[RMDB]
RNA sequence: GGGAACGACUCGAGUAGAGUCGAAAACGGCCCAGCCUAGUGGGCCACAGGCUGUUCAAUGACAGGCCUGGGUGCAGACCGCGCAGCUGCCAACGCAGUUGGCGGUGGGGCUAGCGGUUUCACGGCGUAGAAGCUGGAGGUUCGCCUCCAGCUUCUAAAAAGAAACAACAACAACAAC
Reactivity to DMS in 0.01 (KOAc 150mM, MgCl2 10mM, bicine 150mM(pH8.5), 24C), signal-to-noise 1, nucleotides 027 to 126: c110g050g000c000c010c000a060g000c020c030u050a080g010u050g000g000g000c000c060a000c050a000g000g000c000u000g010u000u040c240a190a130u080g000a050c020a060g010g050c000c030u000g000g000g020u010g030c180a070g030a000c000c000g000c020g060c150a300g000c010u000g010c000c000a000a020c020g000c150a240g000u020u000g000g000c000g020g020u010g000g000g000g000c040u010a140g010c090g000g020u000u000u000c000a050c000g000g000c050g020
Reactivity to 2A3 in 0.01 (KOAc 150mM, MgCl2 10mM, bicine 150mM(pH8.5), 24C), signal-to-noise 2, nucleotides 027 to 126: c070g050g000c000c030c000a010g000c010c090u100a130g120u040g000g000g020c020c010a010c000a000g030g010c000u020g010u200u060c300a270a120u300g020a020c010a020g210g120c050c000u030g000g030g000u010g000c010a000g000a050c000c000g000c030g010c050a000g000c000u020g100c000c000a050a000c050g160c300a140g000u090u060g020g010c000g000g060u040g000g040g050g000c000u030a020g000c010g000g000u020u000u020c000a000c030g000g000c020g070
Structure probing data (DMS and 2A3) for a 177-nucleotide construct. The reactions ran in a buffer of 150 mM KOAc, 10 mM MgCl2 and 150 mM bicine (pH 8.5), at 24 C. The 2A3 profile rests on 835 reads.